[RMDB]
RNA sequence: GGGAACGACUCGAGUAGAGUCGAAAACGCUCACCUUGGCCUCCUGCACCGCCUCGUCCAGCGGCAGCACGGCGUGCUCGCGGUGCUCGCGGGCGCGGUCGCACACCACGCAGAUGGCGCGUCCGUCAAUGCCUCAACUGUUCGCAGUUGAGGCAUUAAAAGAAACAACAACAACAAC
Reactivity to 2A3 in 0.01 (KOAc 150mM, MgCl2 10mM, bicine 150mM(pH8.5), 24C), signal-to-noise 1, nucleotides 027 to 126: c010g000c000u000c000a090c000c020u010u050g030g000c000c030u010c010c000u050g050c000a010c000c000g060c010c000u000c010g060u120c030c010a080g000c060g090g060c040a020g010c010a040c050g000g040c000g020u080g010c050u060c050g030c030g050g030u100g110c070u110c010g000c020g000g000g010c030g000c010g020g020u050c000g000c020a080c020a030c040c020a040c100g070c050a100g050a200u080g050g000c050g020c010g030u040c010c010g000u080c030
Reactivity to DMS in 0.01 (KOAc 150mM, MgCl2 10mM, bicine 150mM(pH8.5), 24C), signal-to-noise 2, nucleotides 027 to 126: c130g010c020u000c040a110c090c080u000u000g010g020c040c020u010c060c020u000g000c010a110c090c040g000c020c030u010c070g010u010c000c080a250g000c040g000g010c120a090g020c050a080c100g010g010c030g010u010g010c140u000c040g020c020g020g020u010g010c120u020c020g020c010g000g000g010c020g020c000g000g010u010c050g020c050a040c120a170c070c060a040c090g010c090a090g000a130u000g000g000c020g030c040g000u000c010c040g040u000c130

An RNA of 177 nucleotides, treated with 2A3 and DMS and read out base by base. The RNA was probed in 150 mM KOAc, 10 mM MgCl2 and 150 mM bicine (pH 8.5) at 24 C. For DMS the reverse transcriptase was MarathonRT. 2A3 adducts were read by reverse transcription with SuperScript II with manganese. Values are in units of 0.01, from 0 to 300, in steps of 10.